[RMDB]
Structure probing data (2A3 and DMS) for a 177-nucleotide construct. Reactivities are given for positions 27 through 126. For 2A3, 1,890 sequencing reads were counted.

RNA sequence: GGGAACGACUCGAGUAGAGUCGAAAAAGAUUGACAGAGCAGGCCGAGGCACUGCCCCCUCAGGAAAGAUGCCGACUGUUGGACGCGCCGAGGCGCUUUUGUCACAUAUGCGAGCGUCUAAAAGCGCCAUUUACCCUACUUUCGAGUAGGGUAAAUGAAAAGAAACAACAACAACAAC
Reactivity to 2A3 in 0.01 (KOAc 150mM, MgCl2 10mM, bicine 150mM(pH8.5), 24C), signal-to-noise 2, nucleotides 027 to 126: a000g090a090u090u150g000a020c010a000g020a030g010c010a030g140g000c010c030g110a080g010g000c040a070c280u180g040c000c020c030c000c000u030c030a010g080g030a150a070a010g070a050u130g060c030c020g070a040c020u000g050u080u070g000g020a020c030g000c010g020c000c020g000a010g010g020c000g010c020u030u050u100u080g010u090c000a000c010a060u220a010u120g040c050g010a010g010c020g000u000c030u050a020a000a060a080g000c010g020c010
Reactivity to DMS in 0.01 (KOAc 150mM, MgCl2 10mM, bicine 150mM(pH8.5), 24C), signal-to-noise 6, nucleotides 027 to 126: a080g010a130u000u000g010a050c040a060g010a080g010c020a060g020g030c020c040g010a220g010g010c040a060c040u000g010c050c020c020c030c050u000c050a080g020g000a090a070a100g000a080u000g010c030c020g010a110c070u000g000u000u000g000g000a060c090g010c030g010c020c050g010a190g010g010c010g000c000u000u000u010u010g010u000c050a070c230a090u010a070u010g010c110g010a070g000c010g010u000c020u010a040a050a120a130g010c010g000c010